[RMDB]
RNA sequence: GGGAACGACUCGAGUAGAGUCGAAAACUCGCGCGAACAUUGAGGCGUGGAGCGCGACAUGAAUCAGCCUCCAUUAGAUUAAUGGUCGACAGAUCAGCGGCGAUCAGCGACCCAAUUAGAAGCCGCUACCGGAAGAGGAGACGCUCGACGGACGUCAAUAGUAUACGGUCUUCGGACCGUAUACUAUAAAAGAAACAACAACAACAAC
Reactivity to DMS in 0.01 (KOAc 150mM, MgCl2 10mM, bicine 150mM(pH8.5), 24C), signal-to-noise 1, nucleotides 027 to 156: c070u020c020g050c040g010c000g020a090a100c050a190u020u010g010a140g040g070c020g040u000g010g010a300g030c030g050c020g000a110c050a130u010g030a170a050u000c030a160g000c000c010u000c000c060a070u000u000a130g020a180u020u000a060a140u000g070g020u000c100g020a110c060a110g000a110u020c020a090g040c000g000g020c040g000a110u010c000a080g070c000g000a070c000c010c010a050a070u000u000a120g020a080a160g000c020c010g050c040u000a130c020c000g020g000a160a070g000a130g000g010a180g000a020c020g030c000u000c020g010a090c030g030g000a030c000g010u000c020a100
Reactivity to 2A3 in 0.01 (KOAc 150mM, MgCl2 10mM, bicine 150mM(pH8.5), 24C), signal-to-noise 3, nucleotides 027 to 156: c030u000c000g000c000g000c000g090a230a010c040a050u020u090g020a000g000g000c030g000u010g010g000a030g000c010g000c000g030a010c040a200u210g100a130a150u130c030a080g000c000c020u080c010c000a180u130u150a080g060a100u050u200a070a100u200g000g010u010c010g040a110c060a120g040a050u010c040a020g010c020g000g020c030g000a010u010c030a020g020c000g020a000c000c000c000a060a050u270u070a080g040a140a060g020c000c000g020c000u040a090c000c060g050g040a080a050g000a090g070g060a130g000a040c030g030c070u010c040g080a040c010g010g010a040c040g020u030c020a030

The data come from the RNA Mapping Database (RMDB), library OK3TST. The record gives the reactivity of an RNA of 207 nucleotides to DMS and 2A3. Reactivities are given for positions 27 through 156. Conditions: 150 mM KOAc, 10 mM MgCl2 and 150 mM bicine (pH 8.5), 24 C.